An RNA of 177 nucleotides, treated with DMS and 2A3 and read out base by base. For DMS the reverse transcriptase was MarathonRT. 2A3 adducts were read by reverse transcription with SuperScript II with manganese.
RNA sequence: GGGAACGACUCGAGUAGAGUCGAAAAGAAAAGAUACAGGCAAGAUGACCGCCUGAAUCGUAGGCAAAAUGACUAAAAGGAUCAGGUUAGCAACAAUGAGUCCUUAAAAUCGACUAAAAUAAAAAAACAUGCUGUUUAAGUUCGCUUAAACAGCAUGAAAAGAAACAACAACAACAAC
Reactivity to DMS in 0.01 (KOAc 150mM, MgCl2 10mM, bicine 150mM(pH8.5), 24C), signal-to-noise 2, nucleotides 027 to 126: g010a080a110a060a100g010a030u010a140c000a010g000g030c000a100a100g050a230u000g000a120c240c160g010c000c000u010g010a050a010u000c010g000u000a020g010g010c130a090a090a030a070u010g030a050c020u020a060a090a020a040g000g030a080u000c050a020g000g010u010u000a060g000c160a050a090c070a050a090u010g000a060g000u010c000c030u000u010a000a070a110a130u000c070g000a060c060u030a040a070a080a070u040a030a020a070a120a000a110a140
Reactivity to 2A3 in 0.01 (KOAc 150mM, MgCl2 10mM, bicine 150mM(pH8.5), 24C), signal-to-noise 1, nucleotides 027 to 126: g010a010a060a020a040g050a000u020a040c010a010g000g000c030a070a050g080a300u190g020a030c040c110g000c000c000u000g000a020a010u010c010g000u020a040g100g000c010a040a000a170a090u130g000a050c000u080a000a000a000a170g000g030a010u080c020a000g010g120u080u040a070g020c060a050a050c010a080a050u070g030a040g210u020c000c000u070u020a000a190a000a090u010c020g000a030c030u100a010a100a140a160u190a040a120a010a000a000a010a000
For 2A3, 1,099 sequencing reads were counted.